An RNA of 177 nucleotides, treated with 2A3 and DMS and read out base by base. For DMS the reverse transcriptase was MarathonRT. The RNA was probed in 150 mM KOAc, 10 mM MgCl2 and 150 mM bicine (pH 8.5) at 24 C. The data come from the RNA Mapping Database (RMDB), library OK2TST.
RNA sequence: GGGAACGACUCGAGUAGAGUCGAAAACGUAUUGAAAGCCUCCAUGCCGAGCGUGAAGUGCUUUCCGAACGCUUCGCCACGCUCUCCUUUGAUGUACAGAAAACUCAGCGUCUGCAUCAGGCGUUCACCAGUAGGACCUGUUCGCAGGUCCUACUGGAAAAGAAACAACAACAACAAC
Reactivity to 2A3 in 0.01 (KOAc 150mM, MgCl2 10mM, bicine 150mM(pH8.5), 24C), signal-to-noise 2, nucleotides 027 to 126: c050g010u090a180u050u150g030a080a020a010g020c010c010u000c020c000a020u040g030c060c120g170a060g010c030g000u030g010a010a000g040u060g140c000u050u030u010c040c020g040a070a000c010g050c020u040u040c040g000c000c020a040c040g030c010u000c040u090c040c000u090u000u150g070a050u090g000u070a040c040a020g120a130a090a070a030c060u080c060a080g000c000g020u040c020u020g000c030a050u030c020a030g010g000c000g040u100u050c040a050
Reactivity to DMS in 0.01 (KOAc 150mM, MgCl2 10mM, bicine 150mM(pH8.5), 24C), signal-to-noise 1, nucleotides 027 to 126: c070g000u000a060u000u000g000a020a040a060g000c030c030u000c020c000a040u000g030c030c180g010a110g010c020g040u000g000a030a020g030u000g000c030u010u010u020c020c110g000a040a090c040g010c050u050u000c090g030c100c100a070c130g010c020u000c030u000c030c060u000u030u000g000a030u010g000u000a100c050a070g000a000a010a070a100c120u000c120a090g010c060g000u000c030u000g000c090a040u000c050a080g000g000c020g000u000u000c020a050